About this RNA:
Structure probing data (2A3 and DMS) for a 177-nucleotide construct. Reactivities are given for positions 27 through 126. DMS adducts were read by reverse transcription with MarathonRT.
RNA sequence: GGGAACGACUCGAGUAGAGUCGAAAAGAUAUGGAUCCGAGUGGACAUGCGUCCGGAUCGGAAACGAUCCGACGCAACAGCCACGAGGAUCCUAAGUCAAAAGAGUGAGAAGUUCGCUUCUCACUCAGGUACUUACGUAGUUCGCUACGUAAGUACCAAAAGAAACAACAACAACAAC
Reactivity to 2A3 in 0.01 (KOAc 150mM, MgCl2 10mM, bicine 150mM(pH8.5), 24C), signal-to-noise 5, nucleotides 027 to 126: g020a010u030a010u090g010g000a000u000c000c020g000a030g010u010g030g040a110c150a300u220g000c010g040u050c190c130g000g000a010u000c000g010g000a030a010a000c010g000a000u000c010c000g000a000c020g010c000a010a030c060a030g020c000c000a000c000g000a000g020g000a010u000c000c000u000a000a000g010u000c000a000a030a060a180g010a000g000u010g000a000g000a010a010g020u070u300c300g060c150u000u000c010u000c000a000c000u000c000a000
Reactivity to DMS in 0.01 (KOAc 150mM, MgCl2 10mM, bicine 150mM(pH8.5), 24C), signal-to-noise 7, nucleotides 027 to 126: g000a030u000a270u010g010g000a010u010c000c000g020a300g000u010g000g000a040c080a180u010g010c000g010u000c120c130g030g000a010u010c000g010g000a050a050a130c010g010a010u000c000c000g010a020c010g010c000a020a020c270a210g010c000c000a010c000g000a300g000g000a000u000c000c000u000a000a090g010u000c020a140a110a130a080g010a010g010u000g010a020g000a010a010g010u010u020c280g010c010u000u000c000u000c000a000c000u000c000a010